This 207-nucleotide RNA was probed chemically with 2A3. Conditions: 150 mM KOAc, 10 mM MgCl2 and 150 mM bicine (pH 8.5), 24 C. The 2A3 profile rests on 674 reads.
[RMDB]
RNA sequence: GGGAACGACUCGAGUAGAGUCGAAAAAGGUGUGGAGCGACCUUAAACAGUUCUGGUGGUGCUCUGAAUGGAGUGCUCUACUGAGAUUAUAAAAUAGAAGGUAAGCUAUUAUCUCUUACAACAGUGCGAAGCACUCGGGGGUUCGCCCCCGAGUGAAGAUCUCAUCAUGGUUCGCCAUGAUGAGAUCAAAAGAAACAACAACAACAAC
Reactivity to 2A3 in 0.01 (KOAc 150mM, MgCl2 10mM, bicine 150mM(pH8.5), 24C), signal-to-noise 1, nucleotides 027 to 156: a000g000g000u000g010u030g010g000a000g000c000g000a020c010c000u090u100a180a070a010c040a060g010u000u020c000u040g040g000u040g000g010u020g000c000u030c030u080g170a150a060u120g020g010a040g000u020g010c020u000c030u080a040c040u010g030a010g050a050u070u070a070u170a080a220a030a040u070a040g040a130a010g080g020u170a040a000g040c010u010a020u090u070a080u040c030u000c000u000u070a040c010a150a010c010a070g070u020g130c020g090a080a040g060c000a000c000u010c010g000g000g030g010g000u050u000c130g010c010c000c010c050c000g000a000g000u000g010a010a010